[RMDB]
RNA sequence: GGGAACGACUCGAGUAGAGUCGAAAAGAACAAGACAUCAAACUUCGUGAAAUGAAACAGUUUCACAAAGUUAUUGAUGAAAUGUUAGUUGAUAUCAUAGAAGAAAAUACUGAGAUCCGUAUUAUCCUUCAAACAUACUUUCAACAGGUAAUACAGACAUGAGUACGUGGUUCGCCACGUACUCAUGAAAAGAAACAACAACAACAAC
Reactivity to DMS in 0.01 (KOAc 150mM, MgCl2 10mM, bicine 150mM(pH8.5), 24C), signal-to-noise 1, nucleotides 027 to 156: g010a120a120c000a030a130g000a300c000a000u030c030a070a000a100c030u010u010c020g000u010g000a010a050a000u000g000a300a230a200c110a090g010u000u000u040c000a000c000a000a060a080g020u000u010a040u000u000g020a020u010g020a020a120a290u000g000u020u000a030g000u000u000g010a130u000a050u000c010a080u000a200g020a120a090g000a050a020a080a030u000a090c050u000g000a120g000a040u000c120c060g000u010a000u000u000a130u000c000c030u000u020c070a030a060a180c110a070u000a070c060u000u000u000c060a010a180c060a090g000g020u000a010a070u040a030c030a150g030a250
Reactivity to 2A3 in 0.01 (KOAc 150mM, MgCl2 10mM, bicine 150mM(pH8.5), 24C), signal-to-noise 3, nucleotides 027 to 156: g070a020a010c020a000a020g090a050c000a010u010c010a010a010a020c010u010u030c040g000u000g020a000a000a010u060g030a120a110a150c100a210g060u000u000u020c010a010c020a000a000a040g010u020u020a120u120u060g000a000u010g000a020a030a030u030g000u040u050a070g010u020u040g060a090u060a060u160c050a080u100a200g060a080a020g020a040a080a030a040u120a060c060u050g040a040g010a210u030c040c010g000u000a000u020u020a030u040c000c040u050u090c040a050a110a050c040a040u210a090c080u110u240u130c060a100a060c020a080g000g040u050a050a000u070a060c040a060g030a020